[RMDB]
RNA sequence: GGGAACGACUCGAGUAGAGUCGAAAAUUGUGACGCAUCUGCCGCCUGAGGCGCCGGUGACGGUGACGUCAAGCAUCACGUGCGGUUUGUCGAUGGAGUCCGUGGGCGCCGGCACGACGAACAGCAGCCCAGCACCUCCUUUCGAGGAGGUGCUGGGAAAAGAAACAACAACAACAAC
Reactivity to 2A3 in 0.01 (KOAc 150mM, MgCl2 10mM, bicine 150mM(pH8.5), 24C), signal-to-noise 1, nucleotides 027 to 126: u010u050g020u030g040a020c000g000c000a000u000c000u160g010c000c000g160c070c080u160g020a010g100g000c090g010c010c020g000g020u040g050a090c030g020g020u030g000a020c000g070u030c010a040a000g060c000a020u120c080a000c060g110u130g010c020g000g000u000u000u180g000u010c020g000a010u170g150g000a080g020u080c060c050g000u090g020g070g000c080g000c000c000g000g010c050a000c000g040a000c040g020a030a030c000a000g050c050a130g000

This 177-nucleotide RNA was probed chemically with 2A3. The reactions ran in a buffer of 150 mM KOAc, 10 mM MgCl2 and 150 mM bicine (pH 8.5), at 24 C. Source: RMDB library OK1LIB, as collected in RNAgym.